[RMDB]
RNA sequence: GGGAACGACUCGAGUAGAGUCGAAAACCGCUGUGUUCGCACAGCGGAAAAAAGCGUACUACGAGAGCGAAGAACACUGACCCUCCGUAUCCCAAAUAGGAUACAGGAGCAGUGGGAGCUCUCGUAUCGCAAAAACGCAAGCGUUCGCGCUUGCGAAGUGGCUCAAACUAUUCGUAGUUUGAGCCACAAAAGAAACAACAACAACAAC
Reactivity to 2A3 in 0.01 (KOAc 150mM, MgCl2 10mM, bicine 150mM(pH8.5), 24C), signal-to-noise 1, nucleotides 027 to 156: c010c000g000c010u000g000u000g010u070u100c300g100c030a000c010a000g000c000g000g000a140a000a000a000a000a000g020c030g000u090a120c230u000a010c040g000a000g010a000g000c040g110a300a030g000a080a000c000a000c010u060g180a280c150c020c000u050c020c000g010u000a010u040c000c020c090a120a300a060u300a060g000g010a000u000a040c090a170g030g000a030g010c000a010g000u040g000g010g020a000g000c010u000c000u010c010g000u000a000u000c000g000c000a050a050a050a050a050c000g020c000a000a000g000c030g020u090u090c130g000c000g000c120u020u010g000c000g010a080a000